[RMDB]
RNA sequence: GGGAACGACUCGAGUAGAGUCGAAAAACGAUGAACGGAGGAUAAAUGGUGCCCAAGGCAGACAGCGGCGCCUUCCUGCUGCUCUUCCUGCUCGUGCUCACUGUCACCGAGCCGCUGCGGCCAGGUGCCUCCUUAUCUUAUUCGUAAGAUAAGGAGGAAAAGAAACAACAACAACAAC
Reactivity to DMS in 0.01 (KOAc 150mM, MgCl2 10mM, bicine 150mM(pH8.5), 24C), signal-to-noise 9, nucleotides 027 to 126: a060c080g010a070u010g010a080a100c100g000g000a060g010g010a060u030a050a080a070u020g000g020u010g010c010c010c030a110a110g000g010c050a050g000a090c080a050g020c060g000g000c070g010c040c030u010u020c020c020u000g010c040u010g010c050u000c020u010u000c010c010u010g000c050u000c040g010u010g000c030u000c050a080c070u010g000u010c040a060c030c030g000a200g010c010c020g000c050u010g010c050g000g000c020c050a110g000g000u020g000
Reactivity to 2A3 in 0.01 (KOAc 150mM, MgCl2 10mM, bicine 150mM(pH8.5), 24C), signal-to-noise 9, nucleotides 027 to 126: a000c050g030a070u140g040a060a020c040g020g030a020g030g010a040u070a140a160a070u190g050g010u070g020c010c010c020a040a050g070g000c020a020g030a180c030a030g030c040g040g000c010g020c000c000u020u030c010c010u030g030c020u020g020c010u010c000u050u030c010c010u020g020c020u010c030g060u070g020c010u030c030a070c050u070g040u120c010a010c040c030g010a020g000c000c000g030c050u080g020c040g020g000c010c000a030g020g020u050g030
This 177-nucleotide RNA was probed chemically with DMS and 2A3. For 2A3 the reverse transcriptase was SuperScript II with manganese. Source: RMDB library OK1LIB, as collected in RNAgym. High DMS reactivity at an A or C suggests that its Watson-Crick edge is free.